Overview
Chemical mapping of a 177-nucleotide RNA with 2A3 and DMS. Conditions: 150 mM KOAc, 10 mM MgCl2 and 150 mM bicine (pH 8.5), 24 C. Source: RMDB library TTRDEL, as collected in RNAgym. 2A3 adducts were read by reverse transcription with SuperScript II with manganese.

RNA sequence: GGGAACGACUCGAGUAGAGUCGAAAAGAUAUGGAGCGGGACGCCGCAGAUAGCUAUCGGAAACGAUAGCUGUAGGAACUACGUCGAUUCGCUCCUAAGUCAAAAGUGCGGUGUUCGCACCGCACAACUCAACUAACCUCUUCGGAGGUUAGUUGAGAAAAGAAACAACAACAACAAC
Reactivity to 2A3 in 0.01 (KOAc 150mM, MgCl2 10mM, bicine 150mM(pH8.5), 24C), signal-to-noise 2, nucleotides 027 to 126: g010a010u040a010u140g000g000a000g010c020g020g030g030a010c010g020c090c030g110c110a010g030a080u050a000g010c010u000a000u010c010g010g010a040a000a010c000g000a000u000a010g020c010u010g000u010a030g020g130a120a100c180u210a060c190g000u020c010g080a170u010u100c000g000c000u000c000c000u020a060a010g020u000c040a060a050a110a140g000u010g000c000g000g000u010g050u050u100c230g040c120a010c010c000g000c000a000c000a000a010
Reactivity to DMS in 0.01 (KOAc 150mM, MgCl2 10mM, bicine 150mM(pH8.5), 24C), signal-to-noise 2, nucleotides 027 to 126: g000a040u000a300u010g000g000a030g020c000g010g000g000a030c030g000c050c030g020c080a040g000a040u010a010g010c000u000a000u000c000g010g000a090a050a100c010g010a000u000a000g000c000u000g010u000a070g000g020a130a230c030u010a080c000g010u000c000g000a100u000u010c020g010c000u010c000c000u000a000a060g000u000c020a070a100a100a110g000u000g020c000g000g020u000g000u000u020c210g010c000a010c000c010g010c010a000c020a040a060